Background: Structure probing data (2A3) for a 207-nucleotide construct. The data come from the RNA Mapping Database (RMDB), library M2RFPK. 2A3 adducts were read by reverse transcription with SuperScript II with manganese.
RNA sequence: GGGAACGACUCGAGUAGAGUCGAAAAACGAGGUACGGCUCGAAAAUAUGACCGGUGUCAUAGCCUCUAGCACACAGAGGUCGCGUGGGUUCAACUCCCCCCCUUUUCCGAGGGUAUCGGAAACCAAAAAACACAAUUUGGUUCGCCAAAUUGUGAACGCUGUAUUUUCGUUCGCGAAAAUACAGCGAAAAGAAACAACAACAACAAC
Reactivity to 2A3 in 0.01 (KOAc 150mM, MgCl2 10mM, bicine 150mM(pH8.5), 24C), signal-to-noise 1, nucleotides 027 to 156: a010c050g050a020g020g020u120a020c020g010g000c010u020c030g040a030a020a080a050u110a040u050g020a020c020c130g200g030u200g050u080c010a030u040a030g010c010c010u000c000u000a080g010c070a050c020a000c030a060g030a000g020g020u050c000g020c030g070u080g070g010g000u070u130c040a020a060c040u000c000c000c000c000c050c000c030u010u040u040u000c000c000g000a000g020g000g020u110a020u000c000g010g000a000a000a000c010c020a050a030a020a010a040a000c010a000c000a010a000u000u000u000g030g000u060u030c060g030c060c000a000a000a000u010u000g000u000g020a000a010